[RMDB]
RNA sequence: GGGAACGACUCGAGUAGAGUCGAAAAAGCCCUGAAGCAGCCUUUUCUGAAGUGUGGACUUCUGAUUAGAGUCUUUCACUUGCACCAGUGUUCAUUCUCAAUGAGGGGACUUCAGGUAGUAACUAAGCAUCAUACGGUGUAGCUUAAAUGGAACACACUGGAUUUACCGAUUCGUCGGUAAAUCCAGAAAAGAAACAACAACAACAAC
Reactivity to 2A3 in 0.01 (KOAc 150mM, MgCl2 10mM, bicine 150mM(pH8.5), 24C), signal-to-noise 1, nucleotides 027 to 156: a000g060c040c000c000u000g040a010a000g020c100a080g030c000c000u050u060u060u000c080u060g040a130a000g000u010g010u060g020g000a000c020u120u050c010u250g030a110u010u130a060g030a010g060u060c000u050u300u180c070a050c030u030u040g060c150a090c050c000a010g010u000g030u020u030c030a000u100u060c080u000c020a050a240u140g020a050g000g010g000g040a010c000u010u020c020a000g000g000u010a050g030u040a050a020c020u020a000a060g070c000a020u050c050a080u060a240c130g000g000u070g020u020a010g050c010u000u150a000a000a140u150g020g050a080a000c010a000c000a010
An RNA of 207 nucleotides, treated with 2A3 and read out base by base. Reactivities are rounded to 0.1 and cut off at 0 and 3.